[RMDB]
RNA sequence: GGGAACGACUCGAGUAGAGUCGAAAACGCUUCAAGGCCGCAUAGCUGCUUCCGUGACAGGAGAUCCCCCUUUUGUGGAGUGCGCCCCUGUGCUGGUGUUGGGGAUACAGGACCCCACCGACGUCCUGGGCCCUGACUGCUAUGCAGAGCUGAUGCAUGACUCCUAAAUAUUCGUAUUUAGGAGUCAAAAAGAAACAACAACAACAAC
Reactivity to 2A3 in 0.01 (KOAc 150mM, MgCl2 10mM, bicine 150mM(pH8.5), 24C), signal-to-noise 4, nucleotides 027 to 156: c050g010c010u090u090c110a140a080g040g000c000c010g030c010a000u000a000g000c020u080g000c030u160u030c010c000g030u030g090a080c010a040g030g020a090g080a290u230c020c000c000c030c040u100u090u110u120g120u110g030g020a120g020u160g040c010g070c000c040c000c020u080g050u190g120c040u040g000g010u040g000u050u030g010g000g000g000a000u040a110c010a000g020g000a010c000c010c040c000a080c030c080g060a070c100g010u000c000c000u020g020g010g020c000c000c000u010g000a010c030u010g000c000u000a000u000g000c020a000g010a010g000c020u030g000a040u090g040c030a020
Reactivity to DMS in 0.01 (KOAc 150mM, MgCl2 10mM, bicine 150mM(pH8.5), 24C), signal-to-noise 3, nucleotides 027 to 156: c050g020c020u000u000c050a100a140g020g020c020c050g050c050a050u000a030g010c010u010g020c060u000u010c020c030g010u000g030a170c040a060g040g000a060g000a140u000c010c010c010c010c040u000u000u000u000g040u000g010g010a070g010u010g010c060g010c020c020c010c020u010g020u000g000c010u010g050g030u000g020u000u000g000g000g010g010a130u010a100c020a030g020g010a060c010c020c020c130a170c130c070g010a140c110g020u000c010c010u000g010g010g010c020c000c000u000g010a080c010u010g020c020u000a030u000g010c020a070g010a150g020c000u000g010a120u000g010c030a220
Chemical mapping of a 207-nucleotide RNA with 2A3 and DMS. The RNA was probed in 150 mM KOAc, 10 mM MgCl2 and 150 mM bicine (pH 8.5) at 24 C. For 2A3, 3,074 sequencing reads were counted. The data come from the RNA Mapping Database (RMDB), library OK3TST.